[RMDB]
RNA sequence: GGGAACGACUCGAGUAGAGUCGAAAAACACACAGAUAUCACGGCUAAUGUUUAUUAGUUAAGUUUCCAUGAGCUCACUCUUUAUUCUUUUCCUCGUUUUCUUAUACCUAGUAUGUUUUCUGACGCUCUGACACAACAAUUUCGAUUGUUGUGUCAGAAAAGAAACAACAACAACAAC
Reactivity to 2A3 in 0.01 (KOAc 150mM, MgCl2 10mM, bicine 150mM(pH8.5), 24C), signal-to-noise 5, nucleotides 027 to 126: a000c070a020c020a000c030a030g060a110u100a000u100c040a050c030g030g000c000u030a030a010u050g080u160u220u160a080u080u010a050g010u020u110a220a050g010u010u040u020c020c050a080u110g040a000g000c010u000c020a040c010u020c020u060u140u160a100u110u130c010u010u050u040u020c000c010u060c050g040u030u080u020u020c040u030u070a070u020a150c020c010u020a060g030u040a120u170g040u020u010u010u040c020u020g020a030c050g020c100u010

This 177-nucleotide RNA was probed chemically with 2A3. For 2A3 the reverse transcriptase was SuperScript II with manganese.